[RMDB]
RNA sequence: GGGAACGACUCGAGUAGAGUCGAAAAGGAGGAGGAGAAAUAUAGCGCGAGAUCGGUCCUCCCACGCGCGUCGCGCGCUGAUAAGCGCGCGCGGAGGAUGAUUAAUAGAUAGCGCGCGGCCUCCUUCGGGAGGCCAAAAGAAACAACAACAACAAC
Reactivity to DMS in 0.01 (KOAc 150mM, MgCl2 10mM, bicine 150mM(pH8.5), 24C), signal-to-noise 2, nucleotides 027 to 135: g000g020a020g000g000a030g030g000a100g010a080a070a100u020a090u010a130g010c000g000c000g000a010g000a030u000c010g030g000u000c010c010u000c000c000c090a090c110g010c050g010c050g020u020c010g000c050g010c080g000c090u000g000a120u030a110a100g030c010g000c010g010c000g010c290g010g000a020g000g000a020u010g010a090u030u030a090a090u020a120g010a050u010a060g020c000g000c010g000c020g000g000c010c000u000c010c000u000u030c070g020g000g020a070g000g040c000c010a000
Reactivity to 2A3 in 0.01 (KOAc 150mM, MgCl2 10mM, bicine 150mM(pH8.5), 24C), signal-to-noise 2, nucleotides 027 to 135: g030g030a010g010g020a010g020g020a050g090a050a190a010u270a030u070a060g010c000g000c000g010a000g000a010u020c020g010g000u000c000c000u000c000c010c000a080c060g120c000g010c020g100u140c030g000c000g000c030g000c070u070g060a110u100a170a030g000c000g000c010g000c000g000c000g020g000a000g010g000a010u010g000a020u090u200a120a110u080a090g080a050u060a030g040c000g000c000g010c000g010g000c000c000u000c000c000u000u000c020g000g000g010a010g030g000c020c040a020